[RMDB]
RNA sequence: GGGAACGACUCGAGUAGAGUCGAAAAAUUCAAGCGCAUGCUGGCGUACGAGACAUUGAUGACUGCCAGGCCAAGCUUGGCCACGAGCUGUCUGACUGUUUAUGGUCGAUCAUUGUCCUAGCCAAAAAAAGAGGUGAAAUUUCGAUUUCACCUCUUUAAAAGAAACAACAACAACAAC
Reactivity to 2A3 in 0.01 (KOAc 150mM, MgCl2 10mM, bicine 150mM(pH8.5), 24C), signal-to-noise 3, nucleotides 027 to 126: a020u130u070c020a020a020g050c040g000c080a040u200g040c050u040g030g010c020g040u060a060c090g010a080g000a190c000a010u020u020g010a020u060g000a040c010u020g030c010c010a010g020g000c010c020a090a070g150c160u150u060g010g000c010c010a110c090g030a080g020c010u010g010u030c020u060g000a000c000u030g180u300u230u160a200u300g040g000u010c020g010a030u020c000a020u020u010g000u000c000c010u000a050g000c020c020a050a020a010a000
Reactivity to DMS in 0.01 (KOAc 150mM, MgCl2 10mM, bicine 150mM(pH8.5), 24C), signal-to-noise 6, nucleotides 027 to 126: a140u010u000c070a120a120g000c070g010c150a070u010g000c100u010g000g010c020g020u000a090c240g000a130g010a020c010a010u010u000g000a030u000g000a020c010u000g010c000c020a130g010g020c010c040a070a180g010c190u010u000g020g010c020c040a070c180g010a140g020c000u000g000u000c000u000g020a050c010u000g000u010u020u010a080u020g000g000u000c010g000a060u000c010a020u000u000g020u000c000c010u000a160g010c020c050a000a000a070a070